This 177-nucleotide RNA was probed chemically with DMS and 2A3. Values cover nucleotides 27 to 126. Conditions: 150 mM KOAc, 10 mM MgCl2 and 150 mM bicine (pH 8.5), 24 C. The data come from the RNA Mapping Database (RMDB), library OK2TRN.

RNA sequence: GGGAACGACUCGAGUAGAGUCGAAAAAGCUCCGAUGAAGACAUUUCUGCUAAGAAUGGAGUAUUGACCGCACUGAGAUUUGCGAAUAUGACAAGUUCUCUUGGUCAAACAGAGAAUUGCGAUUAAACCUACCUAGCACAUUCGUGUGCUAGGUAGGAAAAGAAACAACAACAACAAC
Reactivity to DMS in 0.01 (KOAc 150mM, MgCl2 10mM, bicine 150mM(pH8.5), 24C), signal-to-noise 2, nucleotides 027 to 126: a230g010c030u000c010c030g000a130u010g010a150a070g000a090c070a060u000u000u000c020u000g000c110u000a100a110g010a090a040u000g000g000a100g000u000a060u000u000g000a060c050c010g000c180a070c230u000g000a050g010a040u000u000u000g030c040g030a110a100u010a090u000g020a110c040a000a000g000u000u000c010u000c000u000u010g000g000u000c070a040a110a110c030a040g010a100g010a010a050u000u000g010c010g020a110u000u000a070a130a110
Reactivity to 2A3 in 0.01 (KOAc 150mM, MgCl2 10mM, bicine 150mM(pH8.5), 24C), signal-to-noise 1, nucleotides 027 to 126: a000g020c030u000c010c030g050a110u090g110a050a060g040a030c040a020u070u110u020c060u040g070c030u060a050a000g060a090a060u100g010g010a030g000u060a160u010u000g050a000c000c000g000c000a060c100u050g030a000g010a050u000u010u050g000c030g040a100a120u150a100u160g130a160c050a010a070g030u060u030c010u030c000u020u070g050g000u050c000a100a060a010c080a000g040a000g090a090a110u080u050g000c040g070a020u010u210a090a030a040